[RMDB]
RNA sequence: GGGAACGACUCGAGUAGAGUCGAAAAGAGACACCCUUAUGGGGCAAGACUUGUUUCAGUGGGUCUUUGGCGCUCACUGAGUCUGCCCCCUGAAUGAGUCUCUAAAACGUGCCCUUCGGGGCACGAACCCUCCUUAAUACUUCGGUAUUAAGGAGGGAAAAGAAACAACAACAACAAC
Reactivity to DMS in 0.01 (KOAc 150mM, MgCl2 10mM, bicine 150mM(pH8.5), 24C), signal-to-noise 2, nucleotides 027 to 126: g000a040g010a020c000a110c030c030c010u010u000a080u000g000g020g000g000c010a040a060g010a010c000u010u010g010u010u000u010c060a010g030u010g010g010g010u000c040u000u000u010g040g010c180g000c000u000c000a030c010u000g000a050g010u010c000u000g010c040c000c000c010c050u020g000a050a040u000g050a190g000u000c000u000c000u000a060a060a190a150c030g000u000g020c000c000c010u010u000c190g020g000g000g050c010a000c010g000a030a070
Reactivity to 2A3 in 0.01 (KOAc 150mM, MgCl2 10mM, bicine 150mM(pH8.5), 24C), signal-to-noise 3, nucleotides 027 to 126: g000a000g000a000c000a040c000c010c000u050u140a120u110g010g000g000g070c060a110a030g010a010c010u120u160g050u140u300u100c020a000g010u000g000g030g020u020c060u210u150u180g180g040c110g000c020u000c000a010c010u010g010a000g020u000c000u010g010c000c000c000c000c000u020g010a000a010u070g020a020g030u000c000u010c010u010a020a040a000a050c010g000u000g000c020c000c000u020u040c170g030g000g000g000c010a000c000g000a010a010

Conditions: 150 mM KOAc, 10 mM MgCl2 and 150 mM bicine (pH 8.5), 24 C. This 177-nucleotide RNA was probed chemically with DMS and 2A3. It was measured as part of the RMDB library RFMREP. For DMS the reverse transcriptase was MarathonRT. The DMS profile rests on 1,529 reads.